[RMDB]
RNA sequence: GGGAACGACUCGAGUAGAGUCGAAAAAUAGUUAAGGUUGCGCUUGCCUAUUUAGGCAUACUUCUCAGGAUGGCGCGUUGCAGUCCAACAAGAUCCAGGGACUGUACAGAAUCUUCCUAUACCUCGAAAAACAUUCGCUUGUUCGCAAGCGAAUGAAGAACUAGGAUCACUUCGGUGAUCCUAGUUCAAAAGAAACAACAACAACAAC
Reactivity to 2A3 in 0.01 (KOAc 150mM, MgCl2 10mM, bicine 150mM(pH8.5), 24C), signal-to-noise 2, nucleotides 027 to 156: a000u050a000g030u100u180a000a050g010g020u050u120g000c000g000c030u010u070g010c010c010u130a290u140u240u220a010g000g060c020a010u060a100c060u070u100c120u040c080a070g150g000a170u090g020g000c000g020c000g010u000u000g000c000a000g000u010c000c000a030a030c060a070a130g060a270u070c110c070a040g020g000g000a000c000u010g000u000a010c000a030g080a000a060u000c010u060u000c020c010u020a020u050a050c030c020u040c100g100a050a150a000a000a000c030a020u010u010c000g010c000u000u020g000u050u130c190g060c120a000a000g000c000g020a000a000u000g000a020a020
Chemical mapping of a 207-nucleotide RNA with 2A3.
The RNA was probed in 150 mM KOAc, 10 mM MgCl2 and 150 mM bicine (pH 8.5) at 24 C.